[RMDB]
RNA sequence: GGGAACGACUCGAGUAGAGUCGAAAACGCUGGGUACCAUACUCUUAACGAAGAACUACUGAAGCGCGCACGGUAGGGAGUUGGGGAAAGGUGGUACCUGUGCUGAAGCGCGCACGGCAACCGAAAGGUGCGAAAGUACUCCCUUCGGGGAGUACAACUUAUAAUGUCAGUUCGCUGACAUUAUAAGAAAAGAAACAACAACAACAAC
Reactivity to 2A3 in 0.01 (KOAc 150mM, MgCl2 10mM, bicine 150mM(pH8.5), 24C), signal-to-noise 7, nucleotides 027 to 156: c030g000c010u040g000g010g010u000a000c000c000a030u060a260c040u050c010u250u300a040a020c040g170a300a080g030a090a030c000u010a000c000u030g040a210a040g020c000g000c000g000c000a010c010g020g000u000a010g000g050g020a060g010u050u060g030g000g010g080a110a110a080g270g020u040g000g000u010a000c000c000u010g010u010g000c000u030g010a110a040g010c000g000c000g000c000a000c000g010g000c000a030a020c010c010g030a090a030a030g010g010u010g010c000g050a130a060a010g000u000a000c000u000c000c010c000u000u050c240g030g000g000g000a000g000u000a000c000a000a000
Reactivity to DMS in 0.01 (KOAc 150mM, MgCl2 10mM, bicine 150mM(pH8.5), 24C), signal-to-noise 3, nucleotides 027 to 156: c070g040c030u000g020g010g040u000a020c000c000a120u000a070c050u010c010u010u000a060a070c040g000a160a160g020a120a250c020u000a010c010u000g010a030a050g020c010g040c020g010c020a300c010g000g010u000a050g020g000g000a100g040u010u000g020g020g000g000a060a080a070g030g050u020g000g030u000a020c020c000u000g020u020g000c010u000g030a070a050g020c000g020c030g000c030a300c050g010g000c010a060a090c000c020g010a120a120a190g010g010u000g040c010g000a090a080a130g000u000a020c010u000c000c000c000u010u000c300g060g030g000g020a020g040u000a000c010a030a070
The record gives the reactivity of an RNA of 207 nucleotides to 2A3 and DMS.
The RNA was probed in 150 mM KOAc, 10 mM MgCl2 and 150 mM bicine (pH 8.5) at 24 C.
Source: RMDB library RNAMAK, as collected in RNAgym.